[RMDB]
RNA sequence: GGGAACGACUCGAGUAGAGUCGAAAAGAUAUGGAAUGAACGUCAUCUAAGGACGCCAAAGAGGUCACUCGGAAACGAGUGACUCCCCACCUUUGGAACUACGUCCUGUGACGUUCAUUCCUAAGUCCGUAAGUAUAAUCUUCGGAUUAUACUUACGAAAAGAAACAACAACAACAAC
Reactivity to 2A3 in 0.01 (KOAc 150mM, MgCl2 10mM, bicine 150mM(pH8.5), 24C), signal-to-noise 6, nucleotides 027 to 126: g020a020u090a040u180g000g010a010a000u010g000a000a010c000g010u000c010a080u040c170u300a160a130g000g000a010c000g010c010c000a010a000a000g020a010g000g020u010c000a000c000u000c000g010g030a050a050a030c000g000a010g000u000g000a000c000u020c010c000c000c000a030c010c010u020u000u030g040g040a120a140c180u230a060c280g010u010c010c070u140g000u010g000a000c010g000u000u000c000a000u000u000c000c000u000a020a000g010u000c030
Reactivity to DMS in 0.01 (KOAc 150mM, MgCl2 10mM, bicine 150mM(pH8.5), 24C), signal-to-noise 9, nucleotides 027 to 126: g010a070u000a300u010g000g000a040a010u010g000a010a020c000g010u000c000a010u000c300u020a190a070g000g030a010c000g010c020c010a010a010a010g000a160g010g000u000c010a000c000u000c000g010g000a080a100a160c000g010a020g010u000g000a010c000u000c060c020c000c020a300c070c010u000u000u010g000g010a070a090c230u010a300c030g000u000c000c010u010g000u000g000a000c000g010u000u000c000a000u000u000c000c000u000a010a040g010u000c040

Structure probing data (2A3 and DMS) for a 177-nucleotide construct.